RNA sequence: GGGAACGACUCGAGUAGAGUCGAAAACGAUUACCAAACCAAUCACCGAUAUGCGUAACCAGACGGUCGAAAUGUCCAGAGGUAACUAUACGCAACGUGUGAAGAUUUAUGGUAAUGAUGAAAUUGGCAACGCCCCCUGAUUCGUCAGGGGGCGUUGAAAAGAAACAACAACAACAAC
Reactivity to 2A3 in 0.01 (KOAc 150mM, MgCl2 10mM, bicine 150mM(pH8.5), 24C), signal-to-noise 3, nucleotides 027 to 126: c070g000a000u010u010a000c000c000a060a070a050c110c090a020a020u080c000a000c020c010g040a080u060a120u200g000c000g000u000a010a010c000c000a120g050a170c000g010g000u010c020g120a140a110a260u300g000u010c000c010a020g000a000g020g010u060a090a080c030u100a090u000a100c000g000c010a040a080c000g170u180g010u010g140a000a000g000a030u150u300u190a050u000g000g010u000a000a000u040g040a070u080g090a140a150a000u080u170g120g030
Reactivity to DMS in 0.01 (KOAc 150mM, MgCl2 10mM, bicine 150mM(pH8.5), 24C), signal-to-noise 1, nucleotides 027 to 126: c050g000a050u000u000a000c000c000a000a000a090c180c150a000a170u000c000a000c000c000g000a180u000a170u000g010c000g000u000a010a040c000c000a080g000a140c100g030g020u000c080g000a160a080a130u060g030u000c000c000a020g000a300g010g010u040a150a070c120u010a300u030a000c030g000c000a000a010c000g000u030g000u000g000a040a010g080a080u040u040u000a050u000g000g020u000a000a000u000g010a070u000g000a080a010a090u030u000g020g000
The record gives the reactivity of an RNA of 177 nucleotides to 2A3 and DMS. The 2A3 profile rests on 1,026 reads. For 2A3 the reverse transcriptase was SuperScript II with manganese. The data come from the RNA Mapping Database (RMDB), library OK1LIB. The RNA was probed in 150 mM KOAc, 10 mM MgCl2 and 150 mM bicine (pH 8.5) at 24 C.